RNA sequence: GGGAACGACUCGAGUAGAGUCGAAAAUGAACAGAAAGAUAUACUUUUAGCACAAUAUGGAAUUGUUACGACAGGAGAUAAAGAUGUUGAAAUUCCUAAGCAUUUAAUCAUUGCUUCUAGAUUGUCACGCAUGAAAAGUAUUCGUACUUUUCAUGCGAAAAGAAACAACAACAACAAC
Reactivity to 2A3 in 0.01 (KOAc 150mM, MgCl2 10mM, bicine 150mM(pH8.5), 24C), signal-to-noise 5, nucleotides 027 to 126: u110g020a060a010c090a080g160a070a150a010g110a050u090a000u100a220c030u080u010u130u170a080g050c050a030c020a120a080u100a040u150g010g010a030a020u030u020g070u140u130a000c010g000a000c000a020g090g070a140g080a110u230a070a080a010g060a040u070g020u040u030g040a080a020a020u020u060c010c020u020a030a000g010c000a000u040u080u230a130a060u160c100a060u010u070g010c010u030u010c010u040a080g010a170u000u030g000u000c020a020
Reactivity to DMS in 0.01 (KOAc 150mM, MgCl2 10mM, bicine 150mM(pH8.5), 24C), signal-to-noise 3, nucleotides 027 to 126: u020g010a130a070c100a040g000a090a020a090g000a070u030a110u010a110c000u020u010u000u040a120g010c140a050c040a020a040u000a070u080g090g020a020a030u000u010g020u010u020a050c090g000a010c060a010g000g020a120g020a050u030a130a150a110g020a100u000g030u000u000g000a140a080a070u010u010c010c000u000a010a020g010c000a000u000u010u010a100a090u040c200a020u030u010g000c010u000u000c150u050a080g010a120u010u020g010u000c100a190